This 177-nucleotide RNA was probed chemically with DMS and 2A3. For DMS, 1,016 sequencing reads were counted. For 2A3 the reverse transcriptase was SuperScript II with manganese.
RNA sequence: GGGAACGACUCGAGUAGAGUCGAAAAGAUAUGGAAUUGCGUCCGUCGAAGAACGUAUAGAAAUUCGGAAACGAACACUAUACGGGAGACGCGCAAUUCCUAAGUCAAACACGGCUUCGGCCGUGAACAAGUGCAACUCGUUCGCGAGUUGCACUUGAAAAGAAACAACAACAACAAC
Reactivity to DMS in 0.01 (KOAc 150mM, MgCl2 10mM, bicine 150mM(pH8.5), 24C), signal-to-noise 1, nucleotides 027 to 126: g000a000u000a180u000g000g010a020a000u000u000g000c000g020u010c130c050g050u000c000g000a100a120g090a140a200c010g000u020a020u000a010g000a100a180a300u000u030c000g000g000a020a000a090c010g020a030a030c290a260c020u000a000u000a000c000g030g000g010a040g000a010c010g010c010g040c010a000a000u010u000c000c000u000a000a080g000u000c020a100a140a280c000a000c000g000g030c000u020u020c170g010g020c010c020g000u000g000a010a140
Reactivity to 2A3 in 0.01 (KOAc 150mM, MgCl2 10mM, bicine 150mM(pH8.5), 24C), signal-to-noise 1, nucleotides 027 to 126: g000a030u000a000u130g000g030a000a000u020u030g010c020g070u120c300c000g010u010c040g050a100a010g000a030a040c040g010u010a010u000a000g180a060a300a070u160u010c010g020g020a030a010a010c000g010a000a000c060a030c080u000a000u000a010c040g000g010g040a030g000a000c020g010c000g020c040a000a000u010u100c000c000u000a000a020g000u010c020a030a100a040c000a000c000g000g000c010u100u100c280g240g000c040c030g000u000g000a000a010